Structure probing data (DMS and 2A3) for a 207-nucleotide construct. The reactions ran in a buffer of 150 mM KOAc, 10 mM MgCl2 and 150 mM bicine (pH 8.5), at 24 C.
RNA sequence: GGGAACGACUCGAGUAGAGUCGAAAAACGAUGUUACUGCGCGCCGCUUAAAACGUAUGGAUGAACGUGAAGCCGAACGUAAACGCAAGCGCGAAGAACGUGAAAACAAUACUAACCAAUCCACGAUCGUGCGCAGAAGUCGACGUCUGCAAGGCGACAAGUAUACUGCUUUCGAGCAGUAUACUUGAAAAGAAACAACAACAACAAC
Reactivity to DMS in 0.01 (KOAc 150mM, MgCl2 10mM, bicine 150mM(pH8.5), 24C), signal-to-noise 4, nucleotides 027 to 156: a060c040g030a060u000g020u010u000a080c020u010g010c020g010c010g030c020c030g040c040u010u000a090a070a080a070c040g010u000a110u000g000g000a080u000g020a090a060c050g030u020g000a110a110g040c020c040g030a140a070c060g020u000a040a120a130c110g000c060a110a220g000c060g030c020g010a120a080g000a100a030c050g040u000g000a090a060a080a140c070a080a120u010a150c140u000a080a090c050c040a110a180u010c030c020a050c020g020a110u000c050g000u000g010c010g020c020a070g000a070a120g020u000c030g010a050c050g010u000c020u000g020c060a070a090g010g010c040g020a200
Reactivity to 2A3 in 0.01 (KOAc 150mM, MgCl2 10mM, bicine 150mM(pH8.5), 24C), signal-to-noise 8, nucleotides 027 to 156: a000c040g000a040u060g040u190u150a130c000u020g010c010g000c010g020c060c020g040c110u160u190a070a100a070a040c040g050u100a070u120g000g030a040u030g050a090a030c040g020u040g060a040a010g020c020c010g060a080a050c040g050u110a100a090a040c040g010c100a080a050g010c030g000c030g130a020a000g030a030a000c010g020u050g010a000a060a010a010c100a060a070u140a200c050u110a030a090c060c030a030a040u000c020c000a010c010g030a070u070c030g010u020g030c010g000c000a010g020a040a010g010u020c020g020a030c000g020u000c010u090g170c100a110a110g020g000c010g010a020